[RMDB]
This 177-nucleotide RNA was probed chemically with 2A3 and DMS.
RNA sequence: GGGAACGACUCGAGUAGAGUCGAAAAGAUAUGGAAUGAAUAGCUUUUGACGAUCGGACAUCGGAAACGAUGUCAACGAUCGAUAAGCUACAUUCCUAAGUCAAAGCCAUAAGUUCGCUUAUGGCAAGCUAGUACACACGUUCGCGUGUGUACUAGCAAAAGAAACAACAACAACAAC
Reactivity to 2A3 in 0.01 (KOAc 150mM, MgCl2 10mM, bicine 150mM(pH8.5), 24C), signal-to-noise 4, nucleotides 027 to 126: g020a010u050a020u060g010g050a020a010u040g040a180a300u030a020g000c020u100u180u220u300g300a300c180g000a000u000c000g020g020a010c000a010u010c000g000g000a020a000a000c010g000a000u010g000u000c010a010a020c020g000a000u000c000g000a030u020a010a000g030c000u010a010c000a000u000u000c010c000u010a040a010g010u010c040a080a100a110g000c000c000a000u000a020a000g060u070u190c300g030c200u020u010a000u000g000g000c010a000a000
Reactivity to DMS in 0.01 (KOAc 150mM, MgCl2 10mM, bicine 150mM(pH8.5), 24C), signal-to-noise 2, nucleotides 027 to 126: g000a020u000a170u000g010g000a010a000u000g010a150a200u000a000g000c000u000u000u010u000g020a230c130g010a010u000c000g040g000a010c000a000u000c000g010g000a040a020a110c000g000a010u000g000u000c000a030a110c020g020a000u010c000g010a060u000a020a020g000c010u010a020c010a010u000u000c000c010u000a010a050g000u000c010a120a150a160g000c000c000a020u000a000a000g020u010u000c280g040c020u000u000a000u000g000g040c000a020a040
Conditions: 150 mM KOAc, 10 mM MgCl2 and 150 mM bicine (pH 8.5), 24 C. The 2A3 profile rests on 7,510 reads.